[RMDB]
RNA sequence: GGGAACGACUCGAGUAGAGUCGAAAAAGCAGCUCACCACCCCCAGCUUCUGAACACCUGCCAAGUGAGCCAGGUGGAGGGCUUGGCCCAUCCUAGCUCUGGGACCUCUGCAUGCCCUUGGCCCUGGAGACGUCGUAGUUUUCGAACUACGACGUCUAAAAGAAACAACAACAACAAC
Reactivity to DMS in 0.01 (KOAc 150mM, MgCl2 10mM, bicine 150mM(pH8.5), 24C), signal-to-noise 1, nucleotides 027 to 126: a150g010c020a070g020c050u000c040a080c040c040a190c030c090c030c010c040a050g000c040u000u010c040u010g000a120a150c160a110c000c030u010g020c030c020a110a070g010u000g000a080g050c080c020a060g000g050u000g010g000a060g020g010g050c020u030u000g080g000c060c030c040a050u000c050c030u000a070g010c030u000c020u020g000g000g000a090c030c000u000c120u000g000c050a050u000g000c040c020c000u000u000g000g020c010c040c080u000g000g000
This 177-nucleotide RNA was probed chemically with DMS. Conditions: 150 mM KOAc, 10 mM MgCl2 and 150 mM bicine (pH 8.5), 24 C.